RNA sequence: GGGAACGACUCGAGUAGAGUCGAAAAAGAGUUCUCUUUUCUUCUUGACGGCCUAUCACCCUGAAAUCGGUUUGUCCGGAGCUAGGGUUUCAUGGCCGGCAGAGCCCCGCACCUUUGCGGGGUCCGGCCCUAUGCGCGUGUUCGCACGCGCAUAGGGAAAAGAAACAACAACAACAAC
Reactivity to DMS in 0.01 (KOAc 150mM, MgCl2 10mM, bicine 150mM(pH8.5), 24C), signal-to-noise 3, nucleotides 027 to 126: a090g000a290g010u010u010c070u010c010u010u000u010u000c010u000u000c040u010u010g000a060c010g000g000c000c010u000a210u030c250a030c000c000c000u010g000a070a070a080u000c000g000g010u050u040u010g020u050c000c000g000g000a100g000c100u020a020g000g040g000u000u030u020c150a050u020g020g030c000c000g000g000c160a030g010a170g000c000c000c000c000g010c020a140c300c200u010u020u020g040c000g000g000g010g020u010c000c050g010g040
Reactivity to 2A3 in 0.01 (KOAc 150mM, MgCl2 10mM, bicine 150mM(pH8.5), 24C), signal-to-noise 6, nucleotides 027 to 126: a010g130a020g020u110u010c060u000c000u070u050u070u020c050u060u020c020u020u090g030a030c000g000g010c010c000u060a050u110c040a020c000c020c000u010g050a050a110a150u080c020g030g120u100u190u300g130u140c000c020g030g000a030g050c050u100a010g020g040g030u030u050u090c120a080u070g000g000c000c020g000g000c010a030g010a010g020c000c000c000c010g000c000a090c020c170u170u300u200g000c000g000g000g000g000u000c000c000g040g000